An RNA of 207 nucleotides, treated with 2A3 and read out base by base.
The RNA was probed in 150 mM KOAc, 10 mM MgCl2 and 150 mM bicine (pH 8.5) at 24 C.
For 2A3 the reverse transcriptase was SuperScript II with manganese.
Source: RMDB library M2RFPK, as collected in RNAgym.
The 2A3 profile rests on 1,016 reads.

[RMDB]
RNA sequence: GGGAACGACUCGAGUAGAGUCGAAAAACGAGUCGUACGCGACUCGAAUGGUAUUGUCGGCGUAAAAGAACAAGACGUCACCGGACUCGACCGGGCUAAAAAGCGAAACGUCAUCUACGGAUGACGAAAAACGGACCUGGGUUCGCCCAGGUCCGAAGGUACAAGUAUGCUUCGGCAUACUUGUACCAAAAGAAACAACAACAACAAC
Reactivity to 2A3 in 0.01 (KOAc 150mM, MgCl2 10mM, bicine 150mM(pH8.5), 24C), signal-to-noise 2, nucleotides 027 to 156: a000c020g000a000g000u030c010g020u070a040c230g000c050g110a010c010u000c000g000a060a060u090g040g020u170a090u070u220g090u130c020g000g000c020g050u070a090a090a110a110g060a050a100c070a110a050g080a010c040g010u020c010a000c030c000g110g000a080c010u030c020g060a020c020c000g000g000g020c020u190a070a060a000a000a000g030c050g030a150a070a020c000g010u000c000a000u000c010u030a020c180g170g000a000u010g000a010c000g030a040a000a000a000a000c000g000g010a000c000c000u010g000g030g010u030u030c050g050c000c000c000a000g000g000u020c000c000g000a000a000